Annotation
The data come from the RNA Mapping Database (RMDB), library OK3TST. This 207-nucleotide RNA was probed chemically with DMS and 2A3. High DMS reactivity at an A or C suggests that its Watson-Crick edge is free. Reactivities are rounded to 0.1 and cut off at 0 and 3. 2A3 adducts were read by reverse transcription with SuperScript II with manganese. The RNA was probed in 150 mM KOAc, 10 mM MgCl2 and 150 mM bicine (pH 8.5) at 24 C. For DMS the reverse transcriptase was MarathonRT.
[RMDB]
RNA sequence: GGGAACGACUCGAGUAGAGUCGAAAACAAUUGCAAGCAGUUCAACCUCCAGCAACAACCUACAAGGAGCCUCUCUUAGAAACUGAGAACUCUGUUUCUCUUAAAGUAGGUGCCGGCCUUGCCGUGCAGGAUGGAGCCCUAGUGGCAACCCCUCCAAUGACCUUAGUAUUUUCGAAUACUAAGGUCAAAAAGAAACAACAACAACAAC
Reactivity to DMS in 0.01 (KOAc 150mM, MgCl2 10mM, bicine 150mM(pH8.5), 24C), signal-to-noise 2, nucleotides 027 to 156: c030a100a180u010u010g020c010a120a130g010c040a150g000u010u010c080a070a100c040c010u010c010c010a070g020c010a070a060c050a120a120c040c000u000a030c040a030a200g000g000a070g010c040c020u000c000u000c000u000u000a150g020a110a100a090c120u000g010a080g000a070a100c050u010c050u000g030u010u000u010c070u000c040u000u000a020a020a160g010u000a030g030g020u000g000c000c050g020g010c000c110u000u010g040c000c040g020u000g030c060a030g030g000a130u000g020g000a300g030c050c010c000u000a150g030u000g030g010c020a070a080c050c010c010c000u030c000c010a050a300
Reactivity to 2A3 in 0.01 (KOAc 150mM, MgCl2 10mM, bicine 150mM(pH8.5), 24C), signal-to-noise 2, nucleotides 027 to 156: c020a000a200u120u050g070c060a070a060g000c010a050g040u050u090c010a060a110c000c000u010c030c000a020g000c030a010a050c020a010a060c040c030u030a030c020a060a060g050g010a010g030c030c000u050c030u020c010u080u170a080g170a190a140a070c080u110g030a010g020a150a050c030u060c030u200g070u090u090u040c110u060c000u020u080a090a090a000g040u020a000g060g020u020g040c020c030g060g000c000c160u130u210g000c040c010g090u140g040c000a010g050g020a080u060g030g020a010g000c010c010c010u080a050g050u160g090g000c030a000a110c020c010c000c000u010c000c020a020a080